[RMDB]
An RNA of 177 nucleotides, treated with DMS and read out base by base. The data come from the RNA Mapping Database (RMDB), library OK2TST. The RNA was probed in 150 mM KOAc, 10 mM MgCl2 and 150 mM bicine (pH 8.5) at 24 C. For DMS, 894 sequencing reads were counted.

RNA sequence: GGGAACGACUCGAGUAGAGUCGAAAAAGCAGCCUCCAUCGACAGACUUUUCCAACAGUACCUCCUCCGUCUACAUGCCCAACGGCUACACUUCCGGCGUUGCUGGUUCGACCUACGGACAAAAUCAUCCAUGCCAUCAUUUCGAUGAUGGCAUGGAAAAAGAAACAACAACAACAAC
Reactivity to DMS in 0.01 (KOAc 150mM, MgCl2 10mM, bicine 150mM(pH8.5), 24C), signal-to-noise 2, nucleotides 027 to 126: a120g020c040a110g030c050c010u000c050c050a020u000c060g010a110c140a080g010a080c140u000u010u000u000c010c010a120a090c110a070g030u000a040c050c030u000c020c020u030c040c040g000u000c110u000a070c140a150u010g020c010c000c040a040a100c170g010g010c040u000a040c100a090c060u000u000c070c040g010g020c060g010u000u010g000c060u010g030g000u000u000c020g000a020c080c060u010a060c060g030g000a130c120a020a130a050a110u000c180a120